[RMDB]
RNA sequence: GGGAACGACUCGAGUAGAGUCGAAAACAAUCCCGGCGGGCAACUUCGCUCCAGCCCGAAGCACUGGGAGCGAUUCAGGAGGUAACAAAUGAAUUGAAGUACUACCAGAAAAGGGCCGUGCAAAGCGGCACUCCACGGAAUUCGUUCCGUGGAGUGCAAAAGAAACAACAACAACAAC
Reactivity to DMS in 0.01 (KOAc 150mM, MgCl2 10mM, bicine 150mM(pH8.5), 24C), signal-to-noise 2, nucleotides 027 to 126: c280a180a170u000c030c010c010g000g000c110g030g000g010c050a130a080c070u000u010c050g060c080u020c130c070a070g000c050c020c060g000a150a140g020c180a110c060u040g010g030g000a060g030c000g000a030u030u000c000a080g000g020a300g000g000u040a030a140c030a000a290a180u000g000a030a040u020u000g000a040a070g000u000a130c030u010a130c020c010a050g010a100a010a040a110g020g010g000c010c010g000u000g050c200a000a150a130g000c050g000
Reactivity to 2A3 in 0.01 (KOAc 150mM, MgCl2 10mM, bicine 150mM(pH8.5), 24C), signal-to-noise 2, nucleotides 027 to 126: c040a020a030u040c000c000c000g020g040c010g010g020g020c020a100a080c060u100u080c070g000c010u010c010c030a010g000c000c000c010g030a030a020g100c060a060c040u040g000g010g020a060g000c000g000a000u010u010c010a020g020g020a000g010g020u110a140a070c020a010a030a060u090g020a000a020u020u040g030a090a010g070u060a070c010u060a060c020c000a010g020a040a150a010a010g000g060g000c000c030g020u060g050c040a140a000a000g100c070g010
About this RNA:
Structure probing data (DMS and 2A3) for a 177-nucleotide construct. The DMS profile rests on 1,796 reads. Conditions: 150 mM KOAc, 10 mM MgCl2 and 150 mM bicine (pH 8.5), 24 C. For 2A3, 1,825 sequencing reads were counted.